[RMDB]
RNA sequence: GGGAACGACUCGAGUAGAGUCGAAAACGGCCAACAGGCUUACCGCUGCGCCGGAUCGGGCGAACUUCACGCAACUCCUCUCGAGGGGGUCGUGGUGGCGGAUCCACUCGCCACCGGUGGUCGCCGACCUUAUGCAUACCUUCGGGUAUGCAUAAGGAAAAGAAACAACAACAACAAC
Reactivity to 2A3 in 0.01 (KOAc 150mM, MgCl2 10mM, bicine 150mM(pH8.5), 24C), signal-to-noise 5, nucleotides 027 to 126: c000g020g020c020c020a080a050c050a180g070g020c040u100u140a110c040c030g000c040u060g010c030g020c020c010g040g030a140u110c110g070g010g010c010g020a060a020c030u200u140c040a020c060g030c020a050a060c010u010c010c000u030c020u090c130g050a300g000g030g000g000g000u020c020g040u060g010g010u000g000g000c030g030g000a030u100c060c010a050c040u060c020g010c000c000a010c000c000g010g010u020g010g010u020c010g010c010c000g030a040
Reactivity to DMS in 0.01 (KOAc 150mM, MgCl2 10mM, bicine 150mM(pH8.5), 24C), signal-to-noise 7, nucleotides 027 to 126: c060g000g000c010c030a100a070c090a080g010g000c070u010u010a080c190c130g010c030u000g010c090g000c020c020g010g000a120u000c090g010g000g010c010g010a030a060c060u010u010c050a050c060g010c130a070a050c010u000c010c000u000c030u010c250g010a260g010g000g010g010g000u000c050g010u000g010g020u000g010g020c010g010g000a040u010c120c100a100c110u000c010g010c000c000a020c010c010g010g010u000g010g000u000c030g000c010c000g000a110